[RMDB]
RNA sequence: GGGAACGACUCGAGUAGAGUCGAAAAGAUAUGGAGGAAUGAUUGGGAGCCUGCAGUCGGAAACGACUGCAAGGCAUCGAUCAAUAUUCCUCCUAAGUCAAAAUCUUCAAGGUUCGCCUUGAAGAAACUAUAGCAUUGUCUUCGGACAAUGCUAUAGAAAAGAAACAACAACAACAAC
Reactivity to 2A3 in 0.01 (KOAc 150mM, MgCl2 10mM, bicine 150mM(pH8.5), 24C), signal-to-noise 1, nucleotides 027 to 126: g000a000u020a000u060g000g010a010g020g020a050a010u040g170a080u300u040g050g030g110a150g030c010c000u020g000c000a020g000u010c000g000g000a050a010a000c000g000a000c040u020g000c020a010a020g000g000c000a010u130c070g020a060u070c010a010a010u000a010u010u040c000c000u000c000c010u010a000a000g010u000c010a040a040a070a300u030c000u000u010c020a010a000g080g000u070u160c290g140c060c010u000u000g030a000a000g000a030a010a000
Reactivity to DMS in 0.01 (KOAc 150mM, MgCl2 10mM, bicine 150mM(pH8.5), 24C), signal-to-noise 2, nucleotides 027 to 126: g000a030u000a100u010g000g000a010g010g000a040a020u010g000a050u000u000g000g020g020a260g020c000c000u000g000c000a010g010u000c000g020g000a030a020a070c000g020a020c000u000g000c010a000a000g000g010c010a040u000c210g000a120u000c000a040a020u000a090u000u000c000c000u000c020c000u010a010a070g020u010c030a070a110a090a170u010c000u000u000c010a040a000g000g010u000u020c290g000c000c000u000u000g000a010a000g000a020a090a140